This 207-nucleotide RNA was probed chemically with 2A3 and DMS. The 2A3 profile rests on 7,098 reads. For DMS the reverse transcriptase was MarathonRT. The data come from the RNA Mapping Database (RMDB), library M2RFPK. The DMS profile rests on 8,956 reads. The reactions ran in a buffer of 150 mM KOAc, 10 mM MgCl2 and 150 mM bicine (pH 8.5), at 24 C.
[RMDB]
RNA sequence: GGGAACGACUCGAGUAGAGUCGAAAAGCCGAUGAAUUGCCGAGAAGCCUGGCUCGAAAUCGUCGACGCAUCGACGACGGUCCUGCCAUGAGACCGUAACGGGGACAUGUCGCCUCGAAUGGCGUCGUAUAACAUGAGUGGUUCGCCACUCAUGUAAACACACAGUAAUGUUCGCAUUACUGUGUGUAAAAGAAACAACAACAACAAC
Reactivity to 2A3 in 0.01 (KOAc 150mM, MgCl2 10mM, bicine 150mM(pH8.5), 24C), signal-to-noise 6, nucleotides 027 to 156: g050c020c010g010a040u090g030a060a210u160u130g050c030c020g030a030g070a170a050g030c050c120u100g040g000c040u040c030g080a120a110a060u030c020g010u020c000g010a030c060g020c100a090u040c010g010a010c010g010a020c000g020g000u000c010c010u040g030c010c010a050u060g020a020g010a130c020c020g000u050a020a010c020g000g000g000g020a020c030a120u210g030u120c060g030c020c020u020c020g030a030a030u050g030g020c000g000u050c030g010u060a100u030a230a010c000a010u000g000a000g000u000g010g030u060u080c140g030c030c000a000c000u010c000a000u000g000u000a000a020
Reactivity to DMS in 0.01 (KOAc 150mM, MgCl2 10mM, bicine 150mM(pH8.5), 24C), signal-to-noise 3, nucleotides 027 to 156: g040c010c010g060a090u040g010a100a080u000u000g050c060c030g010a120g000a150a130g000c040c050u000g000g030c000u000c000g010a050a100a080u000c030g010u000c000g010a050c110g020c110a140u000c020g010a050c000g020a040c010g030g020u000c020c010u020g050c010c140a120u010g010a090g010a040c030c020g020u000a040a080c050g000g000g000g010a040c050a120u000g000u000c050g020c000c010u000c040g010a080a080u010g020g030c020g030u010c020g000u000a080u000a130a050c000a010u000g000a020g040u000g020g010u010u010c300g030c000c000a010c010u010c000a000u010g000u000a010a110